An RNA of 177 nucleotides, treated with DMS and 2A3 and read out base by base.
[RMDB]
RNA sequence: GGGAACGACUCGAGUAGAGUCGAAAAGGGUGGACGCUUGCCCUCCCUUCGUGGAGGUUCCUGGUCUCCGCGCGAUUACACGCCGGCGACUCAAGGCACCUACACGAACGGACGGUUCGUGUCUCUCGUUGAUUAAGAAGUUCGCUUCUUAAUCAACAAAAGAAACAACAACAACAAC
Reactivity to DMS in 0.01 (KOAc 150mM, MgCl2 10mM, bicine 150mM(pH8.5), 24C), signal-to-noise 7, nucleotides 027 to 126: g000g000g010u010g010g000a020c010g020c030u000u000g000c030c000c080u000c010c000c060u000u000c010g020u000g010g010a020g000g000u000u000c000c010u010g010g010u000c000u000c000c000g000c220g000c010g010a090u000u010a180c270a210c010g000c010c010g000g000c080g000a010c010u000c080a090a040g020g000c080a020c000c000u000a030c000a010c000g000a010a010c300g000g010a030c300g010g010u000u000c140g020u000g000u000c010u000c030u000c040
Reactivity to 2A3 in 0.01 (KOAc 150mM, MgCl2 10mM, bicine 150mM(pH8.5), 24C), signal-to-noise 5, nucleotides 027 to 126: g050g020g030u150g040g010a000c000g000c020u010u020g000c010c000c000u000c000c000c000u000u000c000g000u010g000g010a000g000g000u010u010c000c000u010g010g010u000c010u000c010c010g030c050g000c000g040a050u140u250a090c130a020c080g000c010c000g000g000c010g000a000c010u020c250a060a020g000g000c010a000c000c000u000a010c000a000c000g000a000a000c000g000g000a000c000g010g000u020u030c020g000u010g000u000c010u000c000u000c080
The reactions ran in a buffer of 150 mM KOAc, 10 mM MgCl2 and 150 mM bicine (pH 8.5), at 24 C. The data come from the RNA Mapping Database (RMDB), library RFMREP. For DMS the reverse transcriptase was MarathonRT.